The data come from the RNA Mapping Database (RMDB), libraries RFM100 and RFMREP. Chemical mapping of a 177-nucleotide RNA with DMS and 2A3. For DMS the reverse transcriptase was MarathonRT. Conditions: 150 mM KOAc, 10 mM MgCl2 and 150 mM bicine (pH 8.5), 24 C.
[RMDB]
RNA sequence: GGGAACGACUCGAGUAGAGUCGAAAAGCGCCCCCCUGUCCAACUCCGAACCUACAGACGCCAUUUGACGCAGGGAGUCCGGUGCACGGGGUAAGCCUGUGUACCAUAAGGGAGACAACCCAGCGCCUAAUUCAAUUUCAUUCGUGAAAUUGAAUUAAAAAGAAACAACAACAACAAC
Reactivity to DMS in 0.01 (KOAc 150mM, MgCl2 10mM, bicine 150mM(pH8.5), 24C), signal-to-noise 9, nucleotides 027 to 126: g010c150g010c030c010c020c020c040c020u010g000u020c020c030a080a120c050u010c020c020g000a120a090c050c020u010a080c110a090g010a110c090g010c030c030a080u020u010u010g010a090c040g020c030a100g020g010g010a300g010u010c040c070g010g020u000g000c010a010c010g010g010g000g010u030a090a140g010c000c000u000g010u000g010u000a010c000c010a060u020a060a110g010g000g000a130g000a070c060a050a080c000c000c000a070g010c020g010c020c030
Reactivity to 2A3 in 0.01 (KOAc 150mM, MgCl2 10mM, bicine 150mM(pH8.5), 24C), signal-to-noise 9, nucleotides 027 to 126: g060c020g040c000c000c000c000c000c010u020g030u030c020c010a040a030c030u010c020c010g050a060a060c000c010u050a040c040a080g060a050c040g030c030c010a070u080u060u150g040a030c020g000c020a030g000g020g000a020g020u010c020c050g000g000u000g000c000a000c000g000g000g010g040u130a070a040g300c000c000u000g000u000g000u010a000c000c000a010u110a060a040g080g030g010a150g010a030c020a030a080c000c000c000a010g010c010g010c010c010